[RMDB]
RNA sequence: GGGAACGACUCGAGUAGAGUCGAAAAUAUCAAUACCACAUAGAACAUCCCCCCACAACGUUUCGUUCUUGUUGGAUUGGUCAUUUUCAAAUAUUCCCCUUUUAUAUGCCCGUAAAAGACAAUAUACGCGACUAUAAGUUUUCGAACUUAUAGUCGCAAAAGAAACAACAACAACAAC
Reactivity to DMS in 0.01 (KOAc 150mM, MgCl2 10mM, bicine 150mM(pH8.5), 24C), signal-to-noise 2, nucleotides 027 to 126: u040a060u000c030a030a010u010a240c000c000a030c030a020u020a020g010a080a000c040a200u090c000c000c000c000c060c060a150c150a030a100c170g040u010u000u000c130g040u000u000c030u000u010g040u010u000g050g010a100u020u000g000g000u030c110a070u000u010u000u020c050a030a060a100u060a230u000u000c010c000c000c070u000u000u000u000a040u020a030u060g000c000c050c000g050u000a050a010a030a160g000a080c020a070a030u000a120u000a080c180
Reactivity to 2A3 in 0.01 (KOAc 150mM, MgCl2 10mM, bicine 150mM(pH8.5), 24C), signal-to-noise 5, nucleotides 027 to 126: u040a000u000c010a010a030u110a300c000c010a040c010a030u300a050g010a000a000c000a150u220c040c020c000c020c010c030a080c030a090a200c130g040u040u180u240c060g000u000u010c000u000u050g060u080u110g010g000a000u010u000g000g010u020c070a050u020u000u010u040c080a070a080a070u120a050u030u000c000c000c000c000u020u060u020u010a070u010a040u160g100c000c020c000g020u020a000a000a000a060g040a040c070a100a010u120a030u050a160c080